Overview:
The data come from the RNA Mapping Database (RMDB), library 15KLIB. The record gives the reactivity of an RNA of 170 nucleotides to DMS and 2A3. The reactions ran in a buffer of 150 mM KOAc, 10 mM MgCl2 and 150 mM bicine (pH 8.5), at 24 C. DMS adducts were read by reverse transcription with MarathonRT. Values are in units of 0.01, from 0 to 300, in steps of 10. For 2A3 the reverse transcriptase was SuperScript II with manganese.

[RMDB]
RNA sequence: GGGAACGACUCGAGUAGAGUCGAAAACAAGAAGUUCCCGGAGGGAUCCAAGAGACGGACGACUUUCCCCCAUUGGUUGGGAAAAGUCCCGGAACCAGGAAAUGGGAAAGAGACGGUAGAAAAGAGCAAGCGGAUGGCUUCGGCCAUCCGAAAAGAAACAACAACAACAAC
Reactivity to DMS in 0.01 (KOAc 150mM, MgCl2 10mM, bicine 150mM(pH8.5), 24C), signal-to-noise 3, nucleotides 027 to 129: c100a080a050g070a130a080g040u020u030c060c010c070g010g030a040g110g010g020a160u010c050c030a100a140g000a160g040a190c070g010g020a020c130g040a050c050u000u000u110c050c000c000c070c130a160u060u040g000g000u050u090g040g030g020a020a000a070a000g020u000c020c040c040g000g000a090a090c130c050a060g000g000a010a040a020u050g040g000g000a040a030a010g000a060g020a070c240g030g000u000a050g030a030a030a020a020g010a020g020c000a100a110g020
Reactivity to 2A3 in 0.01 (KOAc 150mM, MgCl2 10mM, bicine 150mM(pH8.5), 24C), signal-to-noise 3, nucleotides 027 to 129: c060a030a050g170a080a020g080u060u030c000c040c050g010g010a020g000g000g040a040u000c020c020a080a040g030a010g020a060c030g030g000a020c010g000a000c000u040u000u030c010c000c020c000c020a100u100u200g080g000u060u030g000g000g000a000a120a000a000g110u000c060c010c000g000g000a040a080c000c000a010g000g050a030a100a060u170g020g000g000a020a010a040g020a000g010a010c010g000g060u020a010g090a020a040a000a000g040a020g040c070a090a000g010